[RMDB]
RNA sequence: GGGAACGACUCGAGUAGAGUCGAAAAAAAAGGCUAAGGAGACGGAAUCUGGCACCGAGCUUGCCAAGUUCGCUAUUGACUUUGAAGUGACUCAGUUGAAGUCGAUCAUUGUUGGCUGGGACAUUGAGGAAGAGUUCAACGAUGAGAAUUUGCGAGCGAUGACACUGAAUUUCGAUUCAGUGUCAUCAAAAGAAACAACAACAACAAC
Reactivity to 2A3 in 0.01 (KOAc 150mM, MgCl2 10mM, bicine 150mM(pH8.5), 24C), signal-to-noise 4, nucleotides 027 to 156: a000a000a000a000g020g000c020u030a010a020g050g000a030g010a020c070g030g000a050a030u050c020u030g010g020c020a000c020c040g020a020g030c060u070u030g020c050c010a020a030g030u050u030c020g010c060u050a070u040u120g030a070c030u030u010u080g020a060a030g030u040g060a020c010u010c090a080g010u040u050g100a040a010g030u030c010g010a030u030c020a020u010u060g030u080u030g010g000c020u000g010g030g000a030c050a090u050u180g030a050g050g020a040a050g000a020g090u090u130c010a030a020c030g040a030u030g030a020g020a040a070u070u050u140g020c040g010a030g000c050
Reactivity to DMS in 0.01 (KOAc 150mM, MgCl2 10mM, bicine 150mM(pH8.5), 24C), signal-to-noise 1, nucleotides 027 to 156: a030a020a020a020g000g040c030u000a030a080g040g000a080g020a090c030g020g010a040a080u020c050u000g020g000c010a070c010c040g080a170g020c030u000u010g090c000c020a020a040g000u000u000c040g050c050u030a050u010u000g000a010c010u000u000u010g010a070a090g020u000g000a080c030u020c060a130g000u000u000g000a040a040g020u010c000g020a070u000c050a050u000u000g000u010u010g010g000c020u000g030g020g000a100c040a110u000u020g000a090g050g000a110a090g020a080g020u000u000c010a000a120c000g000a060u000g000a100g000a100a130u000u000u000g000c070g020a110g020c160

Description
The data come from the RNA Mapping Database (RMDB), library OK3TST. This 207-nucleotide RNA was probed chemically with 2A3 and DMS. As a SHAPE reagent, 2A3 marks flexible, mostly unpaired nucleotides at the ribose 2'-OH. DMS adducts were read by reverse transcription with MarathonRT. For 2A3, 2,519 sequencing reads were counted. Reactivities are rounded to 0.1 and cut off at 0 and 3. Conditions: 150 mM KOAc, 10 mM MgCl2 and 150 mM bicine (pH 8.5), 24 C. 2A3 adducts were read by reverse transcription with SuperScript II with manganese.